[RMDB]
RNA sequence: GGGAACGACUCGAGUAGAGUCGAAAAGCAUGCGUCGCACAUCGAUGACGACUUCACCGUCGAGGAUGCCAGCGAUCGCUCCCCAGCGCUCUUCCGCGACGAUGAAGCACGUGUCGACUACGCCACGUGAAGCUAGCGCGGCCAGAUCGCGUGCAGCCGCGCUUCCUUGGUUCGCCAAGGAAGCGCGAAAAGAAACAACAACAACAAC
Reactivity to 2A3 in 0.01 (KOAc 150mM, MgCl2 10mM, bicine 150mM(pH8.5), 24C), signal-to-noise 1, nucleotides 027 to 156: g080c060a070u300g020c000g040u010c030g000c000a050c010a070u000c020g030a030u080g030a010c020g000a010c000u010u000c010a010c030c000g000u010c000g000a010g000g020a020u070g130c190c120a010g000c000g030a060u050c050g090c060u120c000c000c000c010a000g020c000g000c000u020c000u010u000c010c000g040c010g000a020c000g010a010u000g000a000a000g050c030a050c010g000u000g000u000c000g010a010c030u120a010c140g000c000c020a000c020g010u030g060a120a030g030c020u050a040g010c000g000c000g030g000c010c030a100g090a180u050c000g000c010g050u060g030c080a010g020c020
Background
Chemical mapping of a 207-nucleotide RNA with 2A3. For 2A3 the reverse transcriptase was SuperScript II with manganese. The data come from the RNA Mapping Database (RMDB), library OK3TST. 2A3 is a SHAPE reagent: it acylates the 2'-hydroxyl of flexible nucleotides of all four kinds. Values cover nucleotides 27 to 156.